Overview: This 177-nucleotide RNA was probed chemically with 2A3 and DMS. 2A3 adducts were read by reverse transcription with SuperScript II with manganese. The RNA was probed in 150 mM KOAc, 10 mM MgCl2 and 150 mM bicine (pH 8.5) at 24 C.

RNA sequence: GGGAACGACUCGAGUAGAGUCGAAAAGAUAUGGAAGGCGUGACAGGGAGAACCCGGUCGGAAACGACCGAGGUUCAUCGAUCUGUCGCCUUCCUAAGUCAAAGGGUGCUACUUCGGUAGCACCCAACUUGUCCCAAUACUUCGGUAUUGGGACAAGAAAAGAAACAACAACAACAAC
Reactivity to 2A3 in 0.01 (KOAc 150mM, MgCl2 10mM, bicine 150mM(pH8.5), 24C), signal-to-noise 1, nucleotides 027 to 126: g000a010u040a010u050g000g020a020a020g030g020c150g170u300g200a030c020a000g120g080g050a300g040a070a000c010c030c020g000g000u000c030g000g000a060a050a010c020g000a000c000c000g090a080g000g000u000u030c000a000u070c000g100a220u130c000u010g000u010c000g000c000c000u000u000c000c020u000a000a000g000u000c040a080a080a180g000g000g010u020g030c000u010a010c000u050u140c300g090g010u010a000g010c000a000c050c000c000a000a000
Reactivity to DMS in 0.01 (KOAc 150mM, MgCl2 10mM, bicine 150mM(pH8.5), 24C), signal-to-noise 1, nucleotides 027 to 126: g000a070u020a130u000g000g010a040a010g030g030c050g030u020g020a020c010a020g000g000g030a170g000a000a000c000c000c000g000g020u000c020g040g000a040a010a120c000g030a000c000c000g040a060g050g020u000u000c000a150u000c290g000a070u000c000u000g030u000c010g010c050c010u020u000c000c000u000a000a040g000u000c040a140a140a150g020g010g000u000g000c000u000a010c000u000u000c210g020g020u000a000g000c010a000c000c000c000a000a010